[RMDB]
RNA sequence: GGGAACGACUCGAGUAGAGUCGAAAAGUGCCAAACUGGAGGAAGGAACGGGCAACGGUAGGUCAGUAUGCCCCGAAUGUGCUGGGCGACACGCGGGCUACAAUGGCCGAGACAGUGGGAUGCAACGGCUCUAGGUCCUUUUCGAAGGACCUAGAGCAAAAGAAACAACAACAACAAC
Reactivity to DMS in 0.01 (KOAc 150mM, MgCl2 10mM, bicine 150mM(pH8.5), 24C), signal-to-noise 2, nucleotides 027 to 126: g030u030g000c020c050a010a030a070c070u010g000g000a060g010g010a110a080g010g010a120a050c120g040g000g020c070a110a050c020g000g000u000a080g000g000u010c070a120g000u000a000u050g020c070c000c000c030g000a080a110u020g010u010g000c070u000g020g010g050c060g000a160c070a040c160g020c140g010g000g010c000u000a030c060a070a020u000g000g040c000c020g000a160g020a030c100a040g010u010g030g010g000a070u020g000c140a060a110c080g040
Reactivity to 2A3 in 0.01 (KOAc 150mM, MgCl2 10mM, bicine 150mM(pH8.5), 24C), signal-to-noise 3, nucleotides 027 to 126: g100u060g100c030c000a010a170a050c060u070g050g010a020g040g020a080a070g020g030a000a070c060g020g010g020c020a050a000c030g000g090u120a050g030g010u060c020a040g000u060a020u180g030c000c000c000c010g070a210a150u180g000u010g030c030u130g000g080g030c040g020a000c000a000c020g000c020g000g000g000c000u000a000c030a040a180u020g030g010c000c000g010a020g050a000c000a040g020u070g010g000g000a000u050g030c010a030a060c000g020
Structure probing data (DMS and 2A3) for a 177-nucleotide construct. Reactivities are given for positions 27 through 126. It was measured as part of the RMDB library RFM100. For 2A3 the reverse transcriptase was SuperScript II with manganese. The reactions ran in a buffer of 150 mM KOAc, 10 mM MgCl2 and 150 mM bicine (pH 8.5), at 24 C.